[RMDB]
RNA sequence: GGGAACGACUCGAGUAGAGUCGAAAAGCUCCUUCAGGUGAACGAUCUCGGUUGUUUCUCUGAAGGCAUGAUCACCCCGUCCGAUGCGGAAGCUCGUGCUUCCGUCGAACGCGAAAGUCGGACGGCGAAAACGAGUUACCGUUCGCGGUAACUCGAAACAUAACUAGGGGUUCGCCCCUAGUUAUGUAAAAGAAACAACAACAACAAC
Reactivity to DMS in 0.01 (KOAc 150mM, MgCl2 10mM, bicine 150mM(pH8.5), 24C), signal-to-noise 3, nucleotides 027 to 156: g000c060u000c010c020u010u000c020a010g040g020u010g010a040a040c010g000a040u000c030u000c270g050g000u010u020g010u000u000u010c040u000c010u000g010a050a030g020g040c070a030u010g020a140u000c050a100c010c000c000c010g000u000c020c030g010a020u000g000c000g010g000a030a010g000c020u000c300g050u000g000c000u000u000c010c010g010u000c020g010a090a130c130g010c090g020a140a120a160g020u010c010g000g030a030c020g020g050c060g000a080a050a080a190c020g030a050g000u000u000a010c000c000g040u000u000c230g000c020g040g010u010a010a010c000u000c000g020a000a080
Reactivity to 2A3 in 0.01 (KOAc 150mM, MgCl2 10mM, bicine 150mM(pH8.5), 24C), signal-to-noise 6, nucleotides 027 to 156: g020c020u020c010c000u000u000c010a040g060g010u110g070a010a000c010g020a020u020c040u110c240g150g000u020u010g010u020u130u020c020u000c000u000g000a000a000g000g000c020a090u150g020a040u100c060a160c020c000c010c000g000u000c000c000g010a010u040g000c000g000g010a000a000g000c030u120c260g300u300g010c000u010u000c000c000g000u000c000g020a090a060c080g020c050g170a100a040a000g020u010c000g010g000a000c010g000g000c050g060a070a080a020a030c020g000a010g000u000u000a010c010c000g010u060u060c270g000c010g100g000u000a000a000c000u000c000g000a000a000

This 207-nucleotide RNA was probed chemically with DMS and 2A3.
For DMS, 8,360 sequencing reads were counted.